[RMDB]
RNA sequence: GGGAACGACUCGAGUAGAGUCGAAAAGAUGAGGUUAAGAACUAGAGAGAACUCGAGACGCGUGAUGAAGCUCAAGAGAAAACGCGAGAGUGAGCAAGUGUGCUAGACGAAGCACACAAGAGGAAGAAUGAGUAAUCGACUUCGGUCGAUUACUCAUAAAAGAAACAACAACAACAAC
Reactivity to DMS in 0.01 (KOAc 150mM, MgCl2 10mM, bicine 150mM(pH8.5), 24C), signal-to-noise 2, nucleotides 027 to 126: g010a060u020g010a060g000g000u000u010a060a120g000a070a070c070u020a080g010a170g020a090g000a110a070c030u000c000g040a140g000a130c060g000c060g000u000g010a080u030g000a110a170g000c080u000c140a050a130g030a040g000a030a010a140a050c090g000c040g000a060g020a060g010u000g000a050g000c050a050a150g000u000g050u000g000c010u010a100g000a150c260g000a020a070g030c020a020c000a000c000a080a090g020a070g010g000a050a110g020a080
Reactivity to 2A3 in 0.01 (KOAc 150mM, MgCl2 10mM, bicine 150mM(pH8.5), 24C), signal-to-noise 1, nucleotides 027 to 126: g050a130u030g070a000g040g060u090u080a040a010g040a070a030c040u040a000g050a090g000a010g020a140a010c020u000c050g000a020g010a000c020g030c000g000u010g050a100u140g110a070a010g030c030u060c110a010a040g070a000g050a040a010a000a000c030g000c070g010a050g000a030g100u010g050a000g040c130a160a110g070u050g000u000g000c000u010a010g010a120c060g120a120a000g060c000a000c000a000c030a050a120g080a000g040g050a000a180g070a030